[RMDB]
RNA sequence: GGGAACGACUCGAGUAGAGUCGAAAAGUUGAGCCGAAUCCUAGGGCUCUUUCUAGGGGUGUCGCUACGGACACGUAUCGUAGCUCUGAUCGUUAAACCUAAGAUCUGGGUAUUAUUUUUAAGAAAAGGGUAAAGAUUACUUCGGUAAUCUUUACCCAAAAGAAACAACAACAACAAC
Reactivity to 2A3 in 0.01 (KOAc 150mM, MgCl2 10mM, bicine 150mM(pH8.5), 24C), signal-to-noise 2, nucleotides 027 to 126: g010u020u030g010a020g020c000c040g080a020a090u080c040c030u070a020g090g030g010c050u030c000u050u060u000c020u020a000g040g000g000g040u070g030u010c050g020c010u020a010c010g050g000a100c060a010c110g010u030a000u030c050g010u000a000g000c000u000c020u060g090a050u060c010g020u040u120a150a110a080c000c030u040a110a060g030a070u010c000u030g070g070g000u000a000u000u210a080u030u250u010u030u130a110a030g000a080a090a000a000
Reactivity to DMS in 0.01 (KOAc 150mM, MgCl2 10mM, bicine 150mM(pH8.5), 24C), signal-to-noise 2, nucleotides 027 to 126: g060u000u000g000a100g010c000c010g000a110a090u000c020c060u000a080g000g000g000c070u020c000u020u010u030c010u010a140g000g000g040g000u000g000u000c020g020c030u000a050c070g000g010a090c300a100c080g000u010a000u000c040g000u000a300g030c020u020c000u050g000a170u040c070g000u000u030a020a060a010c030c040u010a100a130g000a090u020c030u030g020g000g040u010a030u020u020a000u020u000u010u020u020a130a080g000a070a040a100a080
An RNA of 177 nucleotides, treated with 2A3 and DMS and read out base by base. It was measured as part of the RMDB library OK1LIB. DMS adducts were read by reverse transcription with MarathonRT. High DMS reactivity at an A or C suggests that its Watson-Crick edge is free. The DMS profile rests on 2,349 reads.